Structure probing data (DMS) for a 177-nucleotide construct. The DMS profile rests on 771 reads. Source: RMDB library M2PK90, as collected in RNAgym. The RNA was probed in 150 mM KOAc, 10 mM MgCl2 and 150 mM bicine (pH 8.5) at 24 C.
[RMDB]
RNA sequence: GGGAACGACUCGAGUAGAGUCGAAAAGUCAAGAUGUGUAGGAUAGGUGGGAGGCUUUGAACUGUGGACGCCAGUCUGCAUGGAGCCGACCUUGAAAUACCACCCUUUAAUGGAAAAACAAAGUGAACAGUGGAUGCCUAUUCGUAGGCAUCCACUGAAAAGAAACAACAACAACAAC
Reactivity to DMS in 0.01 (KOAc 150mM, MgCl2 10mM, bicine 150mM(pH8.5), 24C), signal-to-noise 1, nucleotides 027 to 126: g000u000c050a070a160g000a040u000g000u000g010u000a060g030g000a090u000a020g010g010u010g000g010g000a200g020g010c020u000u000u000g000a010a060c210u000g000u000g000g000a020c030g010c100c300a110g020u010c010u000g020c000a050u010g000g000a000g000c040c000g000a030c190c020u000u010g000a070a090a110u000a070c020c000a040c000c000c000u000u000u000a070a150u010g000g000a070a060a050a120a120c120a120a010a120g010u010g000a030a180